[RMDB]
About this RNA
The record gives the reactivity of an RNA of 177 nucleotides to DMS.
RNA sequence: GGGAACGACUCGAGUAGAGUCGAAAAACUGCACGUAUGCCCCUACACUCCUUGAUCUUGGAGCGCAACCCUGCAUAUCCAUGCUGCUUGACAACCAGUGUCGCCCAUGAUGACACUCCCGAAAGCGCUAAUUUAGGAGCUUCGGCUCCUAAAUUAGAAAAGAAACAACAACAACAAC
Reactivity to DMS in 0.01 (KOAc 150mM, MgCl2 10mM, bicine 150mM(pH8.5), 24C), signal-to-noise 1, nucleotides 027 to 126: a150c070u000g000c050a050c140g010u000a070u010g000c020c010c020c040u020a090c090a160c070u000c010c060u010u010g010a060u000c100u000u000g000g010a090g000c100g030c060a100a030c040c060c010u020g030c020a060u000a090u000c030c060a060u000g010c010u000g000c030u000u000g010a130c070a040a070c140c010a100g010u000g010u000c040g010c010c040c040a100u000g010a090u000g000a020c110a050c050u000c010c010c010g020a100a080a050g000c240g010

Source: RMDB library VIROID, as collected in RNAgym. Values cover nucleotides 27 to 126. For DMS the reverse transcriptase was MarathonRT. The DMS profile rests on 778 reads. Conditions: 150 mM KOAc, 10 mM MgCl2 and 150 mM bicine (pH 8.5), 24 C.